[RMDB]
This 177-nucleotide RNA was probed chemically with DMS and 2A3.
DMS adducts were read by reverse transcription with MarathonRT.
RNA sequence: GGGAACGACUCGAGUAGAGUCGAAAAGUUGACCGGUUCGCCGGUCAACAAAGAAAGCGGAAAGCACCAGGAAAGGGAGGUGCGGGCCGCAACCACCCUUAAAAACGAGAUCCUUCGGGAUCUCGAAGAUAUGCGUAUCGUUCGCGAUACGCAUAUCAAAAGAAACAACAACAACAAC
Reactivity to DMS in 0.01 (KOAc 150mM, MgCl2 10mM, bicine 150mM(pH8.5), 24C), signal-to-noise 2, nucleotides 027 to 126: g000u000u020g020a030c000c000g000g010u000u030c230g030c010c000g000g010u020c000a000a000c000a010a090a100g030a050a170a140g000c010g000g000a060a090a200g010c010a010c010c010a300g010g010a050a070a050g010g000g000a140g000g000u000g010c030g000g010g010c010c010g030c000a060a060c130c060a090c040c010c030u020u060a090a060a040a110a130c010g000a020g020a010u000c000c000u000u000c230g020g000g000a000u000c000u000c010g000a050a040
Reactivity to 2A3 in 0.01 (KOAc 150mM, MgCl2 10mM, bicine 150mM(pH8.5), 24C), signal-to-noise 4, nucleotides 027 to 126: g010u010u010g000a000c010c020g000g020u060u030c200g020c070c000g000g010u010c000a010a010c000a000a010a000g050a010a070a010g000c000g000g020a020a050a010g000c010a000c020c010a040g040g260a240a170a090g110g050g030a110g030g010u010g000c000g000g020g020c000c000g000c010a000a010c020c020a020c000c000c020u130u160a110a130a020a000a020c010g000a000g000a010u000c000c010u080u160c240g060g010g000a000u000c000u000c000g000a010a000
It was measured as part of the RMDB library M2PK50. Reactivities are given for positions 27 through 126.